RNA sequence: GGGAACGACUCGAGUAGAGUCGAAAAGGAUAUAAUGUAGAUUAUACAAAUUUCGUCAAUAAUUUUAACCGUUACACAACUACCACUAUUGGAACCAAGAGUUUUGAAACAUGUCUUAAAUACGGACUCAUGGACAAACGAAGUGAAUACCAUAACCCUUACCUUCUUAAUUCGUUAAGAAGGUAAGAAAAGAAACAACAACAACAAC
Reactivity to DMS in 0.01 (KOAc 150mM, MgCl2 10mM, bicine 150mM(pH8.5), 24C), signal-to-noise 2, nucleotides 027 to 156: g020g010a190u010a050u000a020a080u000g020u010a180g020a150u010u010a060u010a060c010a060a100a190u000u000u000c050g050u000c030a050a090u010a100a010u010u000u020u000a050a130c060c020g010u000u000a110c040a040c070a040a080c020u020a170c000c010a060c130u010a120u010u010g030g000a100a120c030c010a020a170g020a090g000u010u010u000u010g010a280a100a070c090a050u020g020u000c030u000u010a060a030a120u000a140c040g020g030a060c040u000c010a110u000g020g030a180c070a050a040a070c050g000a070a060g040u010g000a060a050u000a120c050c030a100u000a080a170c130c060
Reactivity to 2A3 in 0.01 (KOAc 150mM, MgCl2 10mM, bicine 150mM(pH8.5), 24C), signal-to-noise 5, nucleotides 027 to 156: g040g000a040u040a010u030a220a100u150g040u080a090g040a190u090u100a060u070a160c050a060a090a090u100u130u080c040g040u040c050a040a130u080a180a090u060u070u120u220a080a090c020c030g040u080u110a030c080a010c010a130a020c020u060a050c030c020a020c050u120a160u160u070g010g030a050a030c030c020a060a020g040a030g070u020u060u100u160g130a090a090a040c050a060u140g030u050c010u060u110a100a150a060u140a060c040g000g010a010c000u000c030a040u050g030g010a040c030a030a090a020c050g040a020a010g030u060g060a040a030u050a090c010c030a030u070a070a030c000c040
The record gives the reactivity of an RNA of 207 nucleotides to DMS and 2A3. Conditions: 150 mM KOAc, 10 mM MgCl2 and 150 mM bicine (pH 8.5), 24 C. It was measured as part of the RMDB library OK3TST. The DMS profile rests on 2,586 reads. 2A3 adducts were read by reverse transcription with SuperScript II with manganese.